Chemical mapping of a 170-nucleotide RNA with 2A3 and DMS. High DMS reactivity at an A or C suggests that its Watson-Crick edge is free. 2A3 is a SHAPE reagent: it acylates the 2'-hydroxyl of flexible nucleotides of all four kinds. The DMS profile rests on 24,258 reads. 2A3 adducts were read by reverse transcription with SuperScript II with manganese.
RNA sequence: GGGAACGACUCGAGUAGAGUCGAAAAAGAGCGAAUGUGUCCGGAGGGAACCCCCAAGCUUUCAACAGAGGAAGAGAGCAAGAUAGAGGAGCCCCCGUGACGCUGGCAGCAUCGCGGACUGGGAGAAUACGAGGGAUGUUCGCAUCCCUCAAAAGAAACAACAACAACAAC
Reactivity to 2A3 in 0.01 (KOAc 150mM, MgCl2 10mM, bicine 150mM(pH8.5), 24C), signal-to-noise 8, nucleotides 027 to 129: a010g100a010g020c060g030a090a060u080g030u030g030u040c020c000g010g010a080g010g030g020a060a090c020c030c000c000c000a020a030g020c010u030u090u050c060a100a080c040a080g150a070g160g060a080a050g020a000g000a010g040c020a050a030g060a110u140a020g060a060g010g020a040g000c000c000c000c010c020g080u120g000a010c050g000c010u010g030g000c020a020g000c000a030u050c020g000c010g010g000a020c030u040g020g030g010a050g050a100a040u130a120c090
Reactivity to DMS in 0.01 (KOAc 150mM, MgCl2 10mM, bicine 150mM(pH8.5), 24C), signal-to-noise 4, nucleotides 027 to 129: a130g030a020g020c050g010a080a040u050g010u020g010u000c040c030g020g030a040g050g020g010a060a080c050c010c040c010c020a140a150g030c070u010u020u010c010a090a180c050a100g050a130g010g020a060a180g000a030g010a030g030c020a040a030g020a090u000a070g040a080g060g010a090g050c020c000c030c030c050g040u050g020a020c120g020c000u010g000g000c160a000g020c050a070u030c000g030c040g060g020a070c010u040g000g000g000a000g030a040a020u040a090c170